Source: RMDB library PDB130, as collected in RNAgym. This 207-nucleotide RNA was probed chemically with 2A3 and DMS. For DMS, 4,368 sequencing reads were counted.
RNA sequence: GGGAACGACUCGAGUAGAGUCGAAAACGCAUAUCAGUGAGGAUUCGUCCGAGAUUGUGUUUUUGCUGGUUGAAAUUUAAUUAUAAACCAGACCGUCUCCUCAUGGUCAAUUCGGUGUUCGCUUUUGAAUACUUCAAGACUAUGUAGGGAAUUUUUGCUACCCUAGUACGUUCGCGUACUAGGGUAGAAAAGAAACAACAACAACAAC
Reactivity to 2A3 in 0.01 (KOAc 150mM, MgCl2 10mM, bicine 150mM(pH8.5), 24C), signal-to-noise 5, nucleotides 027 to 156: c040g020c010a040u080a040u260c020a040g170u060g230a090g040g020a040u040u110c140g050u010c060c020g030a030g000a040u010u000g000u000g030u000u000u020u030u050g060c000u010g020g010u040u020g040a070a080a110u150u200u180a170a110u250u180a080u040a080a070a010c000c010a000g000a010c000c000g050u020c050u030c010c000u000c000a000u010g000g000u000c020a060a130u130u110c090g010g000u010g000u010u000c030g030c170u090u190u210u300g000a000a000u000a010c000u040u050c030a060a020g000a000c000u000a010u030g080u140a040g000g000g050a000a000u060u030u000u060u110g080
Reactivity to DMS in 0.01 (KOAc 150mM, MgCl2 10mM, bicine 150mM(pH8.5), 24C), signal-to-noise 2, nucleotides 027 to 156: c010g080c020a060u010a010u000c000a130g000u010g010a120g030g010a150u010u000c200g010u010c000c010g010a190g020a060u000u000g020u010g000u000u000u000u000u010g010c020u000g010g000u010u000g000a090a110a100u010u010u000a080a160u000u000a130u000a100a030a020c000c010a120g010a120c040c000g010u000c030u000c010c010u010c020a020u010g020g020u000c010a090a210u000u000c140g010g060u000g030u000u000c020g010c300u000u000u010u020g010a010a040u000a010c000u000u000c100a090a300g010a030c000u000a000u000g000u010a030g000g010g000a020a050u000u000u010u000u000g010